[RMDB]
RNA sequence: GGGAACGACUCGAGUAGAGUCGAAAAGGAGAGAUCUGGAAUCAAAGGAGAAAUAAUGGGACAGGGAGACAACCAAGUGAUACUCCUCCAGUACCCUAAAGAAGCUGUCAACAUUGCCGAUCUCCGGUCCAACGUCUCUAUUCGUAGAGACGUUGGAAAAAGAAACAACAACAACAAC
Reactivity to 2A3 in 0.01 (KOAc 150mM, MgCl2 10mM, bicine 150mM(pH8.5), 24C), signal-to-noise 1, nucleotides 027 to 126: g160g000a150g020a010g000a070u020c060u270g010g000a020a040u120c130a180a080a130g050g050a020g070a030a070a010u140a020a050u110g000g020g000a010c020a030g070g040g000a020g070a020c030a020a030c070c000a180a060g000u050g100a020u050a170c020u000c000c050u040c040c010a010g010u120a280c000c070c000u020a110a000a000g050a050a000g080c020u020g150u150c030a020a020c000a170u040u120g080c000c000g020a030u050c030u040c020c030g080g010
Reactivity to DMS in 0.01 (KOAc 150mM, MgCl2 10mM, bicine 150mM(pH8.5), 24C), signal-to-noise 1, nucleotides 027 to 126: g010g020a050g020a100g000a080u000c060u010g060g010a110a100u020c070a080a100a120g000g000a120g020a100a100a100u020a090a060u000g010g030g010a070c020a110g010g010g000a040g000a070c150a010a060c100c060a010a040g010u010g020a160u030a100c010u010c010c080u000c010c060a060g000u000a090c010c020c020u060a050a030a090g010a040a160g010c080u000g000u000c040a120a080c050a060u010u000g000c050c040g000a090u000c040u010c010c040g000g010